[RMDB]
RNA sequence: GGGAACGACUCGAGUAGAGUCGAAAACACGUCUGAGAAACCCUUGCCCCAGACAGCCGUUUUACACGCAGGAGGGGAAGGGGAGGGGAAGGAGAGAGCAGUCCGACUCUCCAAAAGGAAUCCUUUGAACUAGGGUUUCUGACUUAGUGAACCCCGCAUACGCAUUUUGUUUCGACAAAAUGCGUAUAAAAGAAACAACAACAACAAC
Reactivity to 2A3 in 0.01 (KOAc 150mM, MgCl2 10mM, bicine 150mM(pH8.5), 24C), signal-to-noise 1, nucleotides 027 to 156: c080a010c020g140u050c010u220g090a040g090a140a070a060c000c000c000u000u000g160c000c000c000c000a030g040a150c000a010g140c140c000g000u000u040u080u220a070c110a000c060g000c000a020g010g140a060g010g040g000g000a020a040g050g000g000g020a050g000g000g000g010a070a110g000g000a020g000a000g000a000g000c070a030g090u070c020c020g090a050c020u000c000u000c000c000a000a060a000a030g020g030a070a000u000c010c000u050u070u210g040a060a060c080u010a030g000g010g000u000u010u030c000u010g040a040c020u040u080a000g010u020g070a060a070c020c000c000c000g010c070
Reactivity to DMS in 0.01 (KOAc 150mM, MgCl2 10mM, bicine 150mM(pH8.5), 24C), signal-to-noise 2, nucleotides 027 to 156: c030a140c060g030u010c000u020g010a150g010a120a070a070c050c000c000u000u000g010c000c000c000c000a100g000a130c060a300g030c020c040g010u000u000u000u000a120c140a120c070g170c070a120g050g010a160g000g030g030g010a080a050g010g000g000g010a040g000g020g010g010a120a280g040g000a040g010a010g000a230g030c080a180g000u020c120c010g000a130c020u000c000u010c010c010a020a050a070a050g010g000a040a040u000c010c000u000u000u010g040a110a190c240u000a020g010g010g020u000u000u000c000u000g030a120c070u010u000a070g000u000g000a080a240c010c000c000c030g000c300